This 177-nucleotide RNA was probed chemically with DMS and 2A3. The 2A3 profile rests on 1,133 reads. The RNA was probed in 150 mM KOAc, 10 mM MgCl2 and 150 mM bicine (pH 8.5) at 24 C.
RNA sequence: GGGAACGACUCGAGUAGAGUCGAAAAUUCAAGGGCAAUGCCAAGACCGUCAACGAGUUUGCCGCUACGGCUGCUGACAAGCUUGGGCUGUCCGGUAGCGCGUAUCAGCAAAUGGCGUCGGUGAUUGCCGGCAUACGCAUUUCGAUGCGUAUGCCGGAAAAGAAACAACAACAACAAC
Reactivity to DMS in 0.01 (KOAc 150mM, MgCl2 10mM, bicine 150mM(pH8.5), 24C), signal-to-noise 1, nucleotides 027 to 126: u000u030c070a100a140g000g000g030c020a080a000u000g000c040c010a120a140g000a140c010c020g000u020c070a060a140c080g020a300g010u000u000u030g010c020c000g010c100u000a020c000g000g020c000u000g000c010u000g000a000c020a040a060g040c020u010u030g000g000g000c010u000g000u010c070c040g020g000u000a030g000c020g000c010g020u010a000u010c010a050g000c030a010a040a050u000g020g010c020g000u000c050g000g020u010g010a060u000u000g000
Reactivity to 2A3 in 0.01 (KOAc 150mM, MgCl2 10mM, bicine 150mM(pH8.5), 24C), signal-to-noise 1, nucleotides 027 to 126: u100u040c030a050a090g090g060g010c040a090a040u110g010c050c000a050a040g100a040c040c050g000u010c010a040a060c100g020a070g030u000u090u010g020c000c000g060c030u010a000c020g000g000c000u000g000c010u010g010a020c060a140a010g030c000u200u290g300g160g000c020u050g000u030c000c060g010g000u000a000g000c220g000c020g140u000a000u010c020a010g030c000a010a020a020u080g140g000c010g010u030c030g000g000u050g060a120u030u170g020